The data come from the RNA Mapping Database (RMDB), library ARCHII. Structure probing data (2A3) for a 207-nucleotide construct. 2A3 is a SHAPE reagent: it acylates the 2'-hydroxyl of flexible nucleotides of all four kinds.
[RMDB]
RNA sequence: GGGAACGACUCGAGUAGAGUCGAAAAAGCCAAGAGCUGAGCCAUGUGACCCUAGCGAAGGCCCGGGUUACUUGUCUCCUAAAGUGGGGGGCAAUGCGUGAGGCUGGUUUCACAGAGCAGCGACAACCUCCCGCUCCUGGCAGUGGAAGGAUAACAGGCAAACUUGUAAGUUCGCUUACAAGUUUGCAAAAGAAACAACAACAACAAC
Reactivity to 2A3 in 0.01 (KOAc 150mM, MgCl2 10mM, bicine 150mM(pH8.5), 24C), signal-to-noise 1, nucleotides 027 to 156: a000g020c000c010a030a000g050a000g040c100u040g010a000g000c020c000a030u050g020u000g000a000c000c000c010u000a020g020c050g160a290a040g140g000c040c000c000g040g000g000u000u000a000c000u000u000g000u000c000u040c000c070u300a160a110a020g040u120g030g000g010g000g000g030c010a060a030u000g000c030g000u040g000a030g060g000c000u010g010g010u170u300u140c140a190c000a090g050a000g000c030a000g000c000g030a080c140a240a300c040c000u000c000c000c000g000c000u000c000c010u000g010g000c010a000g080u080g040g120a130a040g060g000a080u070a190a060c040a030g060